The record gives the reactivity of an RNA of 177 nucleotides to 2A3. It was measured as part of the RMDB library OK1LIB.
RNA sequence: GGGAACGACUCGAGUAGAGUCGAAAAUACACGCACAUCUCGCCCAGGAACCGGGCGGAGUAUGUCCGCCUGGCGCUCGGAUUCCGUCUGCACGAAUUCGAUGAGCAGGUGAAGGCGGUUCGGGACGCGCGAGCAGCAUCUUCGGAUGCUGCUCGCGAAAAGAAACAACAACAACAAC
Reactivity to 2A3 in 0.01 (KOAc 150mM, MgCl2 10mM, bicine 150mM(pH8.5), 24C), signal-to-noise 1, nucleotides 027 to 126: u080a000c050a000c050g060c000a080c010a040u000c020u030c000g040c000c000c000a060g080g000a030a030c020c090g000g000g000c010g030g000a000g070u300a290u200g190u010c010c000g000c030c000u030g040g000c030g090c000u090c020g010g000a000u050u040c130c120g070u060c080u260g020c030a040c090g000a070a070u080u080c000g000a030u170g010a040g000c060a110g050g030u000g120a130a120g010g000c210g000g000u090u240c080g000g000g050a040c050g050

The RNA was probed in 150 mM KOAc, 10 mM MgCl2 and 150 mM bicine (pH 8.5) at 24 C.